[RMDB]
RNA sequence: GGGAACGACUCGAGUAGAGUCGAAAACGUCCGGCCAUUUAAGGGAGCCAGGCGACCUAAACGGUCGUGUCAUAUGUAGGCACCAGGUGCCUUCUCCCUGUGGCAAACCGCAGGCUCGGACCGGGCGUCAACCCAGGCGCUUCGGUGCUUGGGUUGAAAAAGAAACAACAACAACAAC
Reactivity to DMS in 0.01 (KOAc 150mM, MgCl2 10mM, bicine 150mM(pH8.5), 24C), signal-to-noise 9, nucleotides 027 to 126: c020g020u000c000c000g010g010c000c000a090u020u030u050a070a040g000g010g000a020g010c270c140a140g010g010c000g000a010c000c000u010a080a110a120c240g000g000u000c020g010u000g020u020c050a100u030a070u030g010u020a030g000g000c000a010c000c170a150g020g020u010g000c000c000u000u010c010u000c010c010c010u000g000u000g000g000c070a050a050a050c030c010g000c110a120g000g010c100u020c010g000g000a070c040c000g000g000g000c000g000
Reactivity to 2A3 in 0.01 (KOAc 150mM, MgCl2 10mM, bicine 150mM(pH8.5), 24C), signal-to-noise 9, nucleotides 027 to 126: c010g010u010c010c000g010g020c010c010a090u140u160u240a110a060g080g010g000a000g040c060c050a040g020g000c010g020a020c000c010u060a140a090a030c110g010g010u030c010g000u010g020u010c020a030u090a050u240g110u090a060g000g000c000a000c010c040a040g110g030u020g000c000c000u020u010c000u010c000c010c000u010g000u000g010g000c000a010a050a010c010c000g030c070a060g060g020c030u030c040g010g010a030c010c000g000g000g000c000g000